The data come from the RNA Mapping Database (RMDB), library OK2TST. The record gives the reactivity of an RNA of 177 nucleotides to DMS and 2A3. For DMS the reverse transcriptase was MarathonRT.

RNA sequence: GGGAACGACUCGAGUAGAGUCGAAAACUUUGUCCACCAUCAGAGCCUUGCACCUUGUUUCCUUGAAGGACUUUGACCAUGAAAGGGCGUGGGCGAGGUACUGCAAUGCUAUCUUUCGGGGUGCUGCCCCCUAUGCGUAGUUCGCUACGCAUAGGGGAAAAGAAACAACAACAACAAC
Reactivity to DMS in 0.01 (KOAc 150mM, MgCl2 10mM, bicine 150mM(pH8.5), 24C), signal-to-noise 2, nucleotides 027 to 126: c090u010u010u000g020u000c050c030a060c090c060a130u010c070a040g010a300g020c030c030u000u000g000c010a090c040c010u000u000g000u000u000u010c030c010u000u000g000a190a040g020g000a060c080u000u000u010g000a080c010c010a070u000g010a140a060a020g000g010g000c080g020u000g000g010g030c010g000a010g000g010u000a060c120u010g000c120a030a000u000g010c080u020a060u010c060u000u000u010c110g010g010g000g020u000g000c060u000g020c070
Reactivity to 2A3 in 0.01 (KOAc 150mM, MgCl2 10mM, bicine 150mM(pH8.5), 24C), signal-to-noise 2, nucleotides 027 to 126: c040u110u080u190g070u030c030c040a050c040c010a140u130c020a020g020a000g050c010c020u050u060g040c060a230c100c020u130u220g050u050u140u070c010c000u010u030g040a050a000g020g030a060c000u130u080u150g040a030c020c100a300u060g070a050a030a030g050g000g000c020g020u020g030g010g000c010g030a010g000g010u040a060c010u040g040c050a060a070u070g010c000u100a060u130c030u070u160u130c090g070g000g000g000u030g000c040u100g010c000
Conditions: 150 mM KOAc, 10 mM MgCl2 and 150 mM bicine (pH 8.5), 24 C.